[RMDB]
RNA sequence: GGGAACGACUCGAGUAGAGUCGAAAAAGAGAGAGCGUGAGGGAGGCAUCCGCCUCCUCAGAGAUCGAGAGUACGAUGUCCUCCAUGCUGGAGACACGAUACCGUGACGCGUCGAAAUCGAAUUCGAUCUCGUUGGACCAUUCGUGGUCCAACGAGAAAAAGAAACAACAACAACAAC
Reactivity to 2A3 in 0.01 (KOAc 150mM, MgCl2 10mM, bicine 150mM(pH8.5), 24C), signal-to-noise 1, nucleotides 027 to 126: a060g060a040g000a000g020a010g010c030g020u060g090a040g000g050g000a000g000g000c000a130u160c170c170g020c010c000u010c010c000u020c000a000g000a000g010a030u040c030g000a010g000a020g120u060a040c000g050a300u000g060u080c010c020u030c020c020a120u160g200c100u210g100g000a000g010a020c020a020c020g030a150u050a020c040c000g000u070g060a000c000g000c040g110u070c040g020a090a060a120u170c020g060a000a050u110u030c000g010a070
Reactivity to DMS in 0.01 (KOAc 150mM, MgCl2 10mM, bicine 150mM(pH8.5), 24C), signal-to-noise 2, nucleotides 027 to 126: a070g000a090g010a070g000a110g020c020g030u000g000a080g000g010g000a020g000g030c000a140u000c200c300g000c010c010u000c030c010u000c060a070g000a030g000a030u000c030g000a060g000a170g000u030a070c030g010a120u000g000u000c100c030u030c010c010a140u020g000c300u030g000g020a050g000a150c060a040c050g000a080u000a010c050c100g020u000g000a100c110g010c120g000u000c030g000a010a030a110u040c030g000a070a090u000u000c030g000a070

The record gives the reactivity of an RNA of 177 nucleotides to 2A3 and DMS. Conditions: 150 mM KOAc, 10 mM MgCl2 and 150 mM bicine (pH 8.5), 24 C. The DMS profile rests on 1,055 reads. The data come from the RNA Mapping Database (RMDB), library OK2TST. DMS adducts were read by reverse transcription with MarathonRT.